Source information
Structure probing data (DMS and 2A3) for a 207-nucleotide construct. The reactions ran in a buffer of 150 mM KOAc, 10 mM MgCl2 and 150 mM bicine (pH 8.5), at 24 C.
[RMDB]
RNA sequence: GGGAACGACUCGAGUAGAGUCGAAAAGAUGUUCUUUGGUGUGGGAACAUCGGGUGGCACAACAAUUACUAUGACGCAUCAUGGUGGUUGUGAACUCGUGGCUUGAUGCGUCAAGUUAUGAGUGUUCUAUGUUACUGUUCCCACAGUGAUAUAGAAAUAAUUUACGGCUAUUCGUAGCCGUAAAUUAAAAAGAAACAACAACAACAAC
Reactivity to DMS in 0.01 (KOAc 150mM, MgCl2 10mM, bicine 150mM(pH8.5), 24C), signal-to-noise 4, nucleotides 027 to 156: g020a030u000g010u000u010c010u000u000u000g040g030u000g060u000g020g010g020a020a010c000a010u000c000g020g020g050u000g000g040c050a130c040a080a100c040a060a080u000u000a050c030u000a080u000g010a080c160g000c160a060u000c010a060u000g020g030u000g020g020u000u010g030u010g010a080a050c020u000c040g020u010g020g010c040u000u000g010a040u000g020c140g020u000c000a010a040g000u010u000a040u000g000a120g010u000g000u000u010c010u010a020u000g030u000u000a020c020u010g020u000u000c060c050c070a300c000a010g010u000g010a030u000a030u000a000g010a030a040a300
Reactivity to 2A3 in 0.01 (KOAc 150mM, MgCl2 10mM, bicine 150mM(pH8.5), 24C), signal-to-noise 5, nucleotides 027 to 156: g020a000u030g000u030u020c030u060u080u160g140g050u090g030u100g030g000g010a010a000c000a000u010c010g000g040g020u120g050g030c010a020c010a100a070c020a080a160u130u080a040c030u050a110u150g020a020c020g020c040a040u020c000a010u080g040g040u050g030g020u090u050g070u090g100a070a030c020u040c110g050u060g070g020c020u000u010g010a010u010g020c040g020u010c000a000a000g000u020u040a030u030g050a030g030u050g030u050u010c000u000a000u010g010u020u010a010c000u000g020u030u040c010c000c000a010c010a000g010u000g000a010u010a000u010a030g020a010a050a020
The DMS profile rests on 10,244 reads. 2A3 adducts were read by reverse transcription with SuperScript II with manganese.